[RMDB]
RNA sequence: GGGAACGACUCGAGUAGAGUCGAAAACUUUUCAACUUCGGUUGAAAAGAACCUGCGCCCUGCUCGCAGUUAAGUCUAACUCCUCCUCUGAGUCAUCGGGCGUUAUAUAAUCAUUCGUGAUUAUAAAAUAUUUCAAAGUAUUCGUACUUUGAAAUAUAAAAGAAACAACAACAACAAC
Reactivity to DMS in 0.01 (KOAc 150mM, MgCl2 10mM, bicine 150mM(pH8.5), 24C), signal-to-noise 2, nucleotides 027 to 126: c000u010u000u000u000c000a000a010c000u000u000c170g050g000u000u000g000a000a000a000a040g000a100a110c030c000u000g020c050g010c020c010c010u000g010c020u010c000g010c170a070g020u000u000a050a070g000u010c070u000a090a140c090u000c060c010u000c080c030u000c040u000g010a080g000u000c090a050u000c220g020g000g030c020g000u000u000a060u000a020u010a000a000u000c000a040u000u030c060g020u000g000a030u000u000a010u000a060a080a090